RNA sequence: GGGAACGACUCGAGUAGAGUCGAAAAGUGAUCGAAAGCAGCGGAGAGGAAGUGACCACUACUGAUGAGAAUCUAGUCACAUCUACAGUAGCACAAUUGGAGGAAGGAAGCGGUAUUACUGCUGCGACCAGCGAGCAGCAUUCGUGCUGCUCGCUGGAAAAGAAACAACAACAACAAC
Reactivity to DMS in 0.01 (KOAc 150mM, MgCl2 10mM, bicine 150mM(pH8.5), 24C), signal-to-noise 2, nucleotides 027 to 126: g010u000g010a070u000c060g000a120a100a090g010c060a070g060c050g010g000a170g000a100g010g010a040a120g030u000g010a110c100c070a180c090u000a010c090u000g070a170u000g010a060g000a060a080u000c030u020a080g010u020c140a080c110a060u000c000u000a190c080a020g030u000a060g000c090a070c050a110a110u010u000g000g000a080g070g000a070a030g000g020a040a100g000c050g010g010u000a030u000u010a110c160u000g000c090u010g000c020g000a150
Reactivity to 2A3 in 0.01 (KOAc 150mM, MgCl2 10mM, bicine 150mM(pH8.5), 24C), signal-to-noise 1, nucleotides 027 to 126: g160u080g010a160u110c110g020a190a040a000g150c000a000g010c030g030g030a100g010a000g160g040a070a040g000u000g060a030c020c060a010c030u030a040c000u020g040a080u030g050a030g010a010a010u000c060u130a080g150u030c040a030c020a150u000c020u080a050c000a030g010u000a000g000c040a000c000a150a120u090u020g020g040a050g010g000a110a050g050g020a050a020g000c010g000g030u040a020u060u150a100c100u010g020c020u030g000c000g020a080
An RNA of 177 nucleotides, treated with DMS and 2A3 and read out base by base.
The reactions ran in a buffer of 150 mM KOAc, 10 mM MgCl2 and 150 mM bicine (pH 8.5), at 24 C.
Values cover nucleotides 27 to 126.
The DMS profile rests on 800 reads.
High DMS reactivity at an A or C suggests that its Watson-Crick edge is free.
The 2A3 profile rests on 833 reads.
Values are in units of 0.01, from 0 to 300, in steps of 10.